[RMDB]
RNA sequence: GGGAACGACUCGAGUAGAGUCGAAAAGGGCAAUGAUGUAAAGGUUUUACGACUGACCUUUGUAACUAUGAAGGUUUCUACACUUGACCUGAGCUCAAAAAGACGAGAUUAGUUCGCUAAUCUCGUCCGUAAGACAUCUGUUCGCAGAUGUCUUACGAAAAGAAACAACAACAACAAC
Reactivity to DMS in 0.01 (KOAc 150mM, MgCl2 10mM, bicine 150mM(pH8.5), 24C), signal-to-noise 6, nucleotides 027 to 126: g010g010g010c010a020a020u000g010a140u000g020u000a020a210a170g010g000u000u000u000u020a110c270g010a030c030u000g000a030c010c000u000u000u000g000u010a170a130c240u010a040u000g010a020a020g010g010u000u000u010c110u000a040c020a020c030u000u000g000a030c010c000u000g000a150g000c010u000c020a050a070a090a080a120g000a010c000g010a000g000a020u000u000a000g010u000u010c220g000c010u000a010a010u000c000u000c000g010u000c000
Reactivity to 2A3 in 0.01 (KOAc 150mM, MgCl2 10mM, bicine 150mM(pH8.5), 24C), signal-to-noise 5, nucleotides 027 to 126: g010g000g010c020a000a060u110g130a150u010g040u050a030a100a060g060g010u040u060u110u180a080c100g020a010c030u030g020a010c000c000u010u020u030g080u100a240a210c130u090a100u240g020a020a000g020g000u000u040u050c010u000a010c010a020c020u030u030g040a060c000c000u020g030a030g040c010u020c050a020a090a010a030a020g000a000c000g000a000g000a000u000u000a000g020u000u080c210g000c110u000a000a000u000c010u010c000g010u000c000
Chemical mapping of a 177-nucleotide RNA with DMS and 2A3. The reactions ran in a buffer of 150 mM KOAc, 10 mM MgCl2 and 150 mM bicine (pH 8.5), at 24 C. Source: RMDB library RFMREP, as collected in RNAgym.